[RMDB]
RNA sequence: GGGAACGACUCGAGUAGAGUCGAAAAAGGUCUAGGUCUAGUGCUAGACUAGGUACGUACAGUACGUCACUAGCUAGCGUCGACAUGGAUCAUGAGCGUACUGUAUGUGUCAUGAGACUCUCGAUCCGGAUUCAGUGCACUUCGGUGCACUGAAUCCAAAAGAAACAACAACAACAAC
Reactivity to DMS in 0.01 (KOAc 150mM, MgCl2 10mM, bicine 150mM(pH8.5), 24C), signal-to-noise 1, nucleotides 027 to 126: a120g000g000u000c010u010a020g000g010u000c040u030a200g010u000g010c040u000a000g000a010c010u020a040g010g000u000a030c000g040u000a060c090a020g040u000a010c010g040u010c090a110c040u010a090g010c070u030a070g000c090g020u010c130g000a070c120a070u000g030g000a080u000c050a050u000g000a300g010c050g000u000a040c030u000g000u010a080u000g030u000g000u000c040a140u000g000a250g000a040c050u000c020u000c090g000a100u000c060c090
Reactivity to 2A3 in 0.01 (KOAc 150mM, MgCl2 10mM, bicine 150mM(pH8.5), 24C), signal-to-noise 1, nucleotides 027 to 126: a000g000g030u000c000u000a030g040g080u000c040u140a110g060u090g250c000u000a010g000a020c000u000a000g030g010u030a000c000g030u010a020c000a070g020u000a000c010g020u030c010a040c190u050a050g020c000u040a040g000c000g280u200c110g030a170c030a160u140g070g000a170u070c020a150u100g000a020g060c000g020u010a030c010u010g010u020a000u030g060u010g020u020c000a060u100g030a020g010a030c030u000c000u020c070g090a120u020c070c020

Chemical mapping of a 177-nucleotide RNA with DMS and 2A3.